[RMDB]
RNA sequence: GGGAACGACUCGAGUAGAGUCGAAAAAUAAUAAUAUCUUGGAAAAACAGGGUAUAUAAACCAUUGACUCUUAUUAUUUCACUAAAAUUAGAUUAGGUACUUGCACAAUUCACUGCACAGAGUAAUCCAUCCUGACUGGAUUCGUCCAGUCAGGAUGAAAAGAAACAACAACAACAAC
Reactivity to 2A3 in 0.01 (KOAc 150mM, MgCl2 10mM, bicine 150mM(pH8.5), 24C), signal-to-noise 2, nucleotides 027 to 126: a000u150a000a030u070a000a000u010a030u010c030u020u040g030g040a150a190a020a020a000c020a040g010g000g030u030a000u040a030u050a090a080a030c010c000a060u050u130g010a050c010u000c040u040u000a010u040u030a080u000u210u070c060a080c050u140a200a060a110a100u170u110a020g050a110u110u060a100g000g090u040a050c000u030u060g040c020a000c040a050a200u070u000c040a050c100u010g010c030a050c000a010g050a020g010u020a060a000u010c030
Reactivity to DMS in 0.01 (KOAc 150mM, MgCl2 10mM, bicine 150mM(pH8.5), 24C), signal-to-noise 1, nucleotides 027 to 126: a010u000a070a050u020a060a000u000a040u000c040u000u010g000g000a130a120a120a100a300c040a000g030g000g000u020a010u000a060u000a050a160a110c170c050a090u000u020g000a010c020u020c060u000u000a060u040u000a060u020u000u020c100a060c120u000a090a060a060a160u020u000a010g010a000u010u010a000g000g000u000a120c080u000u000g010c030a050c060a080a050u020u000c160a000c230u000g000c020a040c140a040g020a050g000u010a090a150u010c050
Chemical mapping of a 177-nucleotide RNA with 2A3 and DMS. For 2A3, 1,230 sequencing reads were counted. Values cover nucleotides 27 to 126.